[RMDB]
RNA sequence: GGGAACGACUCGAGUAGAGUCGAAAAGUCGUCGAGAUGAACCACCGCCGGGGAUGUGCCGGUUCGGCGGGCGAGCGUGAUCCCAGCGGCUCGGUCGACGGGUGCGCCAGCUCAACCGUCACGUCUGCAAUUCAUCUCGGUUCGCCGAGAUGAAUUGAAAAGAAACAACAACAACAAC
Reactivity to DMS in 0.01 (KOAc 150mM, MgCl2 10mM, bicine 150mM(pH8.5), 24C), signal-to-noise 3, nucleotides 027 to 126: g000u010c030g000u010c040g020a130g010a070u010g010a070a090c040c020a080c070c070g050c040c040g000g000g000g030a040u010g010u000g000c050c000g010g000u010u030c270g000g010c020g010g000g010c060g040a100g000c060g030u000g000a090u010c010c000c030a300g010c070g030g020c010u030c060g000g000u010c060g000a080c040g000g010g010u020g000c030g000c040c060a070g000c050u000c140a040a090c020c000g020u010c020a040c010g000u020c020u030g000
Reactivity to 2A3 in 0.01 (KOAc 150mM, MgCl2 10mM, bicine 150mM(pH8.5), 24C), signal-to-noise 6, nucleotides 027 to 126: g070u050c030g010u020c040g030a020g030a160u120g040a060a050c030c020a010c020c020g050c020c030g100g000g000g010a040u040g030u060g030c000c000g020g000u060u050c040g050g010c000g010g010g010c020g020a030g020c040g020u120g060a090u070c010c000c020a000g040c010g040g010c040u060c140g080g050u080c040g040a140c000g000g000g030u090g070c010g010c020c020a010g010c010u020c030a030a070c000c010g010u020c000a010c020g040u030c030u040g020